[RMDB]
RNA sequence: GGGAACGACUCGAGUAGAGUCGAAAACGUACCUGUUGGUAUGUCUCAUUAUAAUGACACUACCUUCUUAAAUGGACAAAUUGCGUCUAGCAAUAAUGAGAUUGAGCAAUAACAGGUCUGUGAUGCCGGACCAUACGUUGUUCGCAACGUAUGGUCCAAAAGAAACAACAACAACAAC
Reactivity to 2A3 in 0.01 (KOAc 150mM, MgCl2 10mM, bicine 150mM(pH8.5), 24C), signal-to-noise 2, nucleotides 027 to 126: c010g000u040a020c000c000u010g020u000u060g070g050u070a050u040g000u010c000u000c010a010u020u030a000u000a030a160u140g000a060c000a000c050u040a030c040c000u060u090c000u050u270a240a300a130u120g030g040a020c110a090a050a050u170u100g000c020g000u000c020u040a010g010c050a000a080u030a000a010u010g000a000g010a080u030u100g050a090g130c010a070a030u100a100a000c010a000g010g000u000c000u040g030u020g010a110u110g090c050c030
Reactivity to DMS in 0.01 (KOAc 150mM, MgCl2 10mM, bicine 150mM(pH8.5), 24C), signal-to-noise 1, nucleotides 027 to 126: c100g010u000a090c000c000u000g000u000u010g000g000u000a140u000g000u000c010u000c020a000u010u000a010u000a080a070u040g010a060c060a000c020u000a170c100c190u000u010c080u000u000a070a290a090u000g000g000a070c090a040a080a070u020u000g010c050g010u000c010u000a100g010c200a120a020u000a000a000u000g000a020g000a040u000u000g000a160g000c120a090a140u000a030a000c000a020g020g000u000c080u000g010u000g010a200u020g020c070c060
The data come from the RNA Mapping Database (RMDB), library RFMREP. The record gives the reactivity of an RNA of 177 nucleotides to 2A3 and DMS. The DMS profile rests on 606 reads. As a SHAPE reagent, 2A3 marks flexible, mostly unpaired nucleotides at the ribose 2'-OH. The RNA was probed in 150 mM KOAc, 10 mM MgCl2 and 150 mM bicine (pH 8.5) at 24 C.